Chemical mapping of a 177-nucleotide RNA with 2A3 and DMS. The RNA was probed in 150 mM KOAc, 10 mM MgCl2 and 150 mM bicine (pH 8.5) at 24 C. For 2A3 the reverse transcriptase was SuperScript II with manganese. The DMS profile rests on 1,343 reads. Reactivities are given for positions 27 through 126.
[RMDB]
RNA sequence: GGGAACGACUCGAGUAGAGUCGAAAAGCAGCCAGGCAGAGGCUGCAAUCUCGGCACUUUAGGAGGCCAAGGCAGGUGGCUGGGAGGUGGAGGUUGUAGCGAGCCAAGAUCACGCCACUGCACUCCACGACCAUCCAUUUUUCGAAAUGGAUGGUCGAAAAGAAACAACAACAACAAC
Reactivity to 2A3 in 0.01 (KOAc 150mM, MgCl2 10mM, bicine 150mM(pH8.5), 24C), signal-to-noise 2, nucleotides 027 to 126: g000c000a000g000c050c000a050g090g050c110a070g060a070g160g020c020u010g010c010a020a020u000c010u020c010g040g030c050a060c090u130u110u150a090g020g060a030g070g000c030c050a050a050g110g000c030a020g070g130u020g000g010c040u040g050g080g050a150g000g000u030g000g020a010g020g000u010u070g050u080a050g030c090g080a010g020c000c020a000a000g070a030u030c050a020c070g000c020c000a020c010u010g000c010a050c030u040c010c000a010
Reactivity to DMS in 0.01 (KOAc 150mM, MgCl2 10mM, bicine 150mM(pH8.5), 24C), signal-to-noise 2, nucleotides 027 to 126: g000c020a010g000c010c010a140g020g010c130a100g040a110g010g000c000u000g000c000a020a060u010c010u000c030g010g020c110a040c080u000u000u010a110g000g010a090g030g010c050c060a090a130g000g000c040a050g010g000u000g000g030c040u010g010g010g010a080g010g030u010g000g000a210g000g000u010u000g020u000a070g010c170g000a070g010c000c060a050a200g000a050u010c110a140c060g010c000c020a020c030u000g000c010a090c040u010c010c040a220